[RMDB]
RNA sequence: GGGAACGACUCGAGUAGAGUCGAAAAUUUUCUUAUUGAGACCCAUUGACCAAUAGCUUGGUCAAUAGUGCUUGAUUCUUGAGUUUAGAAAACUUCUAUUGAGCUUCUUACUAUGUCCUGGGGACUGUGCUGGGCAGUAAGAACACCAGAAAGGGUGCUAGGAGUAUCGGUUCGCCGAUACUCCUAGAAAAGAAACAACAACAACAAC
Reactivity to 2A3 in 0.01 (KOAc 150mM, MgCl2 10mM, bicine 150mM(pH8.5), 24C), signal-to-noise 2, nucleotides 027 to 156: u040u030u010u060c060u140u200a280u130u080g030a070g050a090c030c020c070a000u040u000g000a040c000c040a000a110u050a190g210c220u030u060g000g010u010c000a010a000u010a030g140u100g050c030u000u090g090a120u180u070c040u120u130g070a040g060u030u110u040a050g110a040a220a030a030c020u050u060c100u150a060u060u040g040a030g020c000u050u000c000u000u000a010c030u020a040u270g030u110c000c000u030g000g000g080g140a150c090u090g110u090g110c060u030g020g020g020c000a000g000u000a000a020g000a020a030c000a010c020c010a030g180a190a080a070g160g000g000u050g040